[RMDB]
RNA sequence: GGGAACGACUCGAGUAGAGUCGAAAAGAAUGCCCAUUCGUGGGCAUUCCACCGCAGCGAAGGCGAAAGGCAUUUUAUGCGUACGCUGGCGAAAGCCUAAAAAAGCUCCACUUUUCGAAGUGGAGAACUAAUUAGCCUGAUUCGUCAGGCUAAUUAGAAAAGAAACAACAACAACAAC
Reactivity to DMS in 0.01 (KOAc 150mM, MgCl2 10mM, bicine 150mM(pH8.5), 24C), signal-to-noise 6, nucleotides 027 to 126: g010a010a000u000g010c000c000c000a060u000u010c200g030u000g020g010g010c000a010u000u000c000c040a200c060c020g020c080a060g000c040g010a110a070g010g000c010g000a070a080a130g010g000c060a040u000u010u000u010a080u010g010c010g010u000a140c060g020c030u000g010g030c020g010a120a060a120g010c020c030u010a000a030a050a050a070a140g000c000u000c000c010a010c010u000u000u000u010c160g010a010a010g010u000g000g000a000g010a020a050
Reactivity to 2A3 in 0.01 (KOAc 150mM, MgCl2 10mM, bicine 150mM(pH8.5), 24C), signal-to-noise 6, nucleotides 027 to 126: g000a010a000u000g010c020c000c010a000u020u080c230g060u030g000g000g000c000a000u000u000c000c000a020c010c020g040c050a030g030c020g070a120a030g050g010c020g050a120a040a020g130g000c030a050u080u100u070u180a090u180g010c000g020u040a040c030g000c030u030g010g010c010g020a080a030a010g000c010c030u130a080a070a020a010a010a010g030c000u000c000c000a010c010u050u040u090u110c220g070a020a000g000u000g000g000a000g000a000a000